RNA sequence: GGGAACGACUCGAGUAGAGUCGAAAAUCGCCGCCUUUCGCUUUUGGCUUUUCGGCCACUGGCGCUGUAAGUCAUUAAUAAAGCGAACACCAACCGACAGCGUCAACGUUGCACAUGUGACAGGCUACGCUAAAUGCACGUUCGCGUGCAUUUAGCGAAAAGAAACAACAACAACAAC
Reactivity to DMS in 0.01 (KOAc 150mM, MgCl2 10mM, bicine 150mM(pH8.5), 24C), signal-to-noise 2, nucleotides 027 to 126: u000c030g020c040c030g000c050c090u000u000u000c010g010c000u000u000u000u000g000g060c010u000u000u010u000c110g030g010c010c010a270c220u010g000g000c050g050c010u000g020u000a050a060g000u000c100a070u020u060a140a100u010a020a050a020g020c040g000a020a110c150a060c110c040a000a060c190c140g000a090c110a030g000c000g000u000c060a080a180c090g000u000u000g000c070a150c140a060u000g010u000g020a050c090a060g030g020c040u000a140
Reactivity to 2A3 in 0.01 (KOAc 150mM, MgCl2 10mM, bicine 150mM(pH8.5), 24C), signal-to-noise 1, nucleotides 027 to 126: u060c030g010c040c020g000c000c020u040u030u030c030g030c000u110u040u070u010g000g000c000u110u060u090u170c030g050g000c000c010a110c140u140g030g000c050g050c000u000g030u060a060a030g000u040c070a030u060u260a170a070u180a150a050a000g060c020g000a020a040c020a080c070c070a010a040c030c010g050a080c000a010g000c000g030u070c020a070a080c060g030u040u050g110c070a190c020a180u120g010u020g060a020c030a030g050g010c040u020a050
Source information
An RNA of 177 nucleotides, treated with DMS and 2A3 and read out base by base. The 2A3 profile rests on 1,340 reads. 2A3 adducts were read by reverse transcription with SuperScript II with manganese. Source: RMDB library OK2TST, as collected in RNAgym.